[RMDB]
RNA sequence: GGGAACGACUCGAGUAGAGUCGAAAACACCCAAUUGCCACUCCUUUGAUCCCGCGACACUACUAGAAGCCUAAAGUUCGCGGUUGGCCCUACUAAUCGGCAUCGCACCCCGCCGGACCUCCCCCCAGUACACAAUAAUGUUCGCAUUAUUGUGUACAAAAGAAACAACAACAACAAC
Reactivity to DMS in 0.01 (KOAc 150mM, MgCl2 10mM, bicine 150mM(pH8.5), 24C), signal-to-noise 3, nucleotides 027 to 126: c230a170c030c010c000a080a110u010u000g010c040c010a090c060u000c020c020u000u000u010g020a140u010c100c010c000g020c020g010a030c150a050c020u000a100c110u010a060g000a100a150g010c080c040u000a060a090a080g020u010u000c040g000c020g000g020u000u000g000g020c010c050c030u000a090c100u010a090a130u000c060g010g020c010a050u000c050g000c100a120c040c010c020c070g000c020c030g000g000a210c010c000u000c010c010c000c000c010c030a110
Reactivity to 2A3 in 0.01 (KOAc 150mM, MgCl2 10mM, bicine 150mM(pH8.5), 24C), signal-to-noise 2, nucleotides 027 to 126: c040a010c020c010c010a030a070u110u100g020c010c000a030c030u030c060c000u080u040u120g020a070u120c000c020c000g040c000g030a020c010a010c130u160a020c010u050a060g050a210a050g130c010c050u080a110a080a030g050u060u000c010g000c010g020g010u010u090g000g010c000c000c040u060a080c020u090a120a080u080c020g020g010c000a030u080c070g040c040a110c000c020c020c020g030c000c000g040g030a040c020c020u010c030c000c010c010c000c000a010